Chemical mapping of a 177-nucleotide RNA with 2A3 and DMS.
Source: RMDB libraries RFM100 and RFMREP, as collected in RNAgym.
2A3 is a SHAPE reagent: it acylates the 2'-hydroxyl of flexible nucleotides of all four kinds.
The reactions ran in a buffer of 150 mM KOAc, 10 mM MgCl2 and 150 mM bicine (pH 8.5), at 24 C.
Values cover nucleotides 27 to 126.
Values are in units of 0.01, from 0 to 300, in steps of 10.
RNA sequence: GGGAACGACUCGAGUAGAGUCGAAAACUAGCAAGAUUAAGACUUUAAGGGUCGUAGUCGAAGCGAAAGCGAGUCUGAAUAGGGCGAAUUAGUUAGUGGGGGCAGACGCGAAACUUGGUGAUCUACCAGGAUGUCUAUAGUUCGCUAUAGACAUCCUAAAAGAAACAACAACAACAAC
Reactivity to 2A3 in 0.01 (KOAc 150mM, MgCl2 10mM, bicine 150mM(pH8.5), 24C), signal-to-noise 6, nucleotides 027 to 126: c030u030a020g050c060a110a040g010a030u060u100a090a020g030a050c020u110u100u180a070a070g190g020g000u010c020g000u000a020g040u030c020g030a060a010g010c010g030a010a000a020g040c020g010a010g030u010c020u060g020a080a080u120a200g010g020g000c010g010a040a090u130u030a100g070u050u050a040g020u100g030g010g000g010g000c010a010g020a040c020g010c030g050a040a020a050c050u030u050g030g000u040g040a090u000c010u060a040c020c040
Reactivity to DMS in 0.01 (KOAc 150mM, MgCl2 10mM, bicine 150mM(pH8.5), 24C), signal-to-noise 6, nucleotides 027 to 126: c020u000a090g010c080a070a180g000a020u000u000a070a070g000a020c000u010u010u030a110a130g020g000g020u010c010g000u020a030g010u010c020g010a140a080g000c030g000a110a070a070g000c040g000a090g000u010c020u020g010a060a070u040a100g010g000g000c020g010a060a090u030u010a070g020u020u020a050g010u010g000g010g000g000g010c040a030g000a050c080g000c070g000a070a050a070c140u000u010g000g000u010g010a080u020c050u020a080c190c120